[RMDB]
RNA sequence: GGGAACGACUCGAGUAGAGUCGAAAACGAAUCGUCCCCACAUAGCAGAGCCCGGAGCCCCUUCCAAAAUGACCGAGGGAGGCACUUGGAGCAUGGGGGGCCAGUGGAGCCAUGGGAUGCUCCUCCCCUAUUAAUAUGUGUUCGCACAUAUUAAUAGAAAAGAAACAACAACAACAAC
Reactivity to DMS in 0.01 (KOAc 150mM, MgCl2 10mM, bicine 150mM(pH8.5), 24C), signal-to-noise 5, nucleotides 027 to 126: c090g000a080a060u010c110g000u000c010c010c010c020a110c080a060u000a120g040c040a120g010a140g000c030c010c020g020g010a080g020c010c020c010c010u000u000c010c060a060a070a140a110u020g000a100c180c170g010a060g020g000g010a110g030g010c030a030c040u000u010g030g010a100g010c040a050u000g000g000g010g000g010g000c030c060a090g000u000g000g000a020g010c010c060a120u010g010g010g000a280u010g010c010u000c000c000u000c000c000c010
Reactivity to 2A3 in 0.01 (KOAc 150mM, MgCl2 10mM, bicine 150mM(pH8.5), 24C), signal-to-noise 4, nucleotides 027 to 126: c020g070a060a120u130c060g020u020c000c010c030c010a170c000a040u140a020g030c060a020g060a080g160c010c010c020g000g010a020g010c020c010c000c000u030u000c040c010a050a120a110a270u220g060a070c040c070g010a020g030g030g000a300g030g000c000a010c030u050u110g010g010a040g000c010a020u020g010g020g000g000g000g000c000c010a030g020u060g030g020a010g000c040c040a120u190g110g080g050a070u090g010c000u000c020c000u000c000c010c000